[RMDB]
RNA sequence: GGGAACGACUCGAGUAGAGUCGAAAACUGCAUCACCUGAUCACUGAUGGCUCAACGGUAUCCGGCGGUACAACUGAAUAUUUGUAGCUGCCUUUUGAGCGGGUUGGCUGCAAUCCGAAACGGAGAGAAAACCUAAUUACGUUCGCGUAAUUAGGAAGGUUGUGCACAUGUUCGCAUGUGCACAACCAAAAGAAACAACAACAACAAC
Reactivity to 2A3 in 0.01 (KOAc 150mM, MgCl2 10mM, bicine 150mM(pH8.5), 24C), signal-to-noise 1, nucleotides 027 to 156: c010u040g040c010a000u010c000a070c000c000u000g050a070u030c030a070c000u040g010a010u120g190g010c010u050c120a000a120c070g000g030u140a060u060c000c040g000g000c040g000g120u050a070c060a100a020c190u120g040a100a030u070a120u180u120u020g000u000a000g040c000u000g000c000c000u120u090u010u070g120a050g100c030g000g000g000u150u240g070g050c010u030g010c050a000a010u020c050c000g080a140a150a150c070g020g000a000g020a000g040a050a080a000a000c000c000u000a000a000u010u000a000c000g000u000u090c260g030c000g070u000a000a000u000u000a000g000g000a000a000

Structure probing data (2A3) for a 207-nucleotide construct. For 2A3, 442 sequencing reads were counted. The RNA was probed in 150 mM KOAc, 10 mM MgCl2 and 150 mM bicine (pH 8.5) at 24 C. Reactivities are rounded to 0.1 and cut off at 0 and 3. For 2A3 the reverse transcriptase was SuperScript II with manganese.